RNA sequence: GGGAACGACUCGAGUAGAGUCGAAAACUGAUUAGUAACUAAUCCAAAGCAAGUAUAGGAGAACAGGUUUUUAACUAUUUUUAGGCAGAUAAAAAAUAGUAUUUGACAGUCUAACACUAACUGAACACCACGCUCUCUUACUUCGGUAAGAGAGCAACCUAUCUAGGGAGUUCGCUCCCUAGAUAGGAAAAGAAACAACAACAACAAC
Reactivity to 2A3 in 0.01 (KOAc 150mM, MgCl2 10mM, bicine 150mM(pH8.5), 24C), signal-to-noise 4, nucleotides 027 to 156: c010u010g000a070u090u050a040g060u090a090a090c050u010a060a050u060c040c030a090a030a060g020c040a050a020g020u060a110u110a160g020g040a070g040a040a040c070a110g060g000u040u010u010u040u070a030a000c000u010a020u000u030u000u020u050a030g070g000c010a030g050a120u140a060a030a020a010a000a000u020a000g020u020a110u050u040u070g050a020c010a010g040u010c040u100a130a020c030a000c080u070a150a010c030u070g060a100a020c030a040c110c010a030c090g000c000u000c000u000c010u000u000a000c000u020u020c090g070g000u000a000a000g000a000g000a000g000c000a000a000
Reactivity to DMS in 0.01 (KOAc 150mM, MgCl2 10mM, bicine 150mM(pH8.5), 24C), signal-to-noise 1, nucleotides 027 to 156: c050u020g040a080u000u000a060g010u010a080a140c040u000a040a110u020c020c050a100a040a170g000c080a080a070g000u000a080u020a090g000g000a100g000a070a060c070a200g010g000u000u000u000u000u010a070a080c020u000a030u000u050u000u000u000a070g000g020c070a140g020a090u010a000a000a020a000a060a010u020a000g000u010a170u000u000u000g090a090c040a050g020u000c030u020a050a120c110a060c150u000a040a100c050u020g020a060a100c100a100c080c030a050c090g020c000u000c000u000c000u000u000a000c000u000u000c300g040g000u010a050a010g020a010g010a030g000c030a000a020